[RMDB]
RNA sequence: GGGAACGACUCGAGUAGAGUCGAAAAACUCUUCGUGGUGCUCUACAACGCCAGUGUUAGCAAUUGCGAAGCGGGGUUCGCGGCGAUGUCCCGCGCACAUGCAGAUGCAGCACGCACCGGUAUGAUGAAAUGCUCGCAUGUUCGCAUGCGAGCAUUUAAAAGAAACAACAACAACAAC
Reactivity to 2A3 in 0.01 (KOAc 150mM, MgCl2 10mM, bicine 150mM(pH8.5), 24C), signal-to-noise 2, nucleotides 027 to 126: a020c000u000c020u020u010c030g060u020g010g070u030g020c010u060c000u070a080c030a180a000c060g030c030c000a090g000u020g010u020u070a060g020c100a060a060u140u040g000c020g050a140a000g000c000g020g020g130g010u150u000c070g030c080g000g040c060g030a060u170g070u170c000c000c000g000c000g000c000a030c000a040u170g000c010a060g000a060u070g000c000a000g050c000a010c080g000c050a050c030c010g040g000u150a060u110g150a050u090g030
Reactivity to DMS in 0.01 (KOAc 150mM, MgCl2 10mM, bicine 150mM(pH8.5), 24C), signal-to-noise 1, nucleotides 027 to 126: a060c040u000c040u020u040c060g180u000g000g000u000g030c030u020c140u000a040c130a040a210c040g040c150c060a150g000u000g010u070u030a170g000c000a000a130u000u020g030c050g010a130a210g000c070g010g000g000g040u000u000c070g020c030g000g000c040g000a040u040g000u000c120c020c010g030c060g000c020a040c050a120u080g000c000a000g000a140u040g030c000a130g000c020a000c200g000c060a020c120c000g000g000u000a090u000g030a140u000g000

This 177-nucleotide RNA was probed chemically with 2A3 and DMS. The 2A3 profile rests on 660 reads. The reactions ran in a buffer of 150 mM KOAc, 10 mM MgCl2 and 150 mM bicine (pH 8.5), at 24 C. The data come from the RNA Mapping Database (RMDB), library OK1LIB.